[RMDB]
RNA sequence: GGGAACGACUCGAGUAGAGUCGAAAACGGUGAGCUGAUAAGCGCGAAACUUCAAUACCCGAUCUCAGAGUACAACACCAUCGAAAUCGACUUUAGUAAGUUUGAUAAACCUCAAGGUGUCGUUUUCGAGUGGCUUAACGUUCGCGUUAAGCCACUCAAAAGAAACAACAACAACAAC
Reactivity to 2A3 in 0.01 (KOAc 150mM, MgCl2 10mM, bicine 150mM(pH8.5), 24C), signal-to-noise 2, nucleotides 027 to 126: c010g060g010u010g040a060g080c010u040g050a040u050a230a090g120c020g020c040g070a040a100a080c020u140u160c080a060a110u060a160c000c030c000g010a060u000c050u020c080a030g010a010g080u150a130c030a070a030c020a080c000c050a050u010c060g000a000a120a000u010c010g040a000c000u020u030u070a050g060u160a240a070g010u030u050u110g120a090u190a060a070a030c010c010u050c050a020a070g220g040u040g010u010c000g010u010u020u000u010c030
Reactivity to DMS in 0.01 (KOAc 150mM, MgCl2 10mM, bicine 150mM(pH8.5), 24C), signal-to-noise 1, nucleotides 027 to 126: c010g020g000u010g010a190g000c050u000g010a140u000a060a120g010c030g000c140g000a060a080a040c030u010u000c140a110a170u010a070c080c010c010g060a170u010c080u010c050a110g000a140g000u000a060c100a080a110c090a040c020c000a000u000c000g010a050a060a070u000c010g000a000c020u000u000u000a040g060u050a060a070g000u000u000u000g000a170u010a060a030a090c010c010u000c060a080a140g030g010u010g010u000c020g020u000u010u000u000c040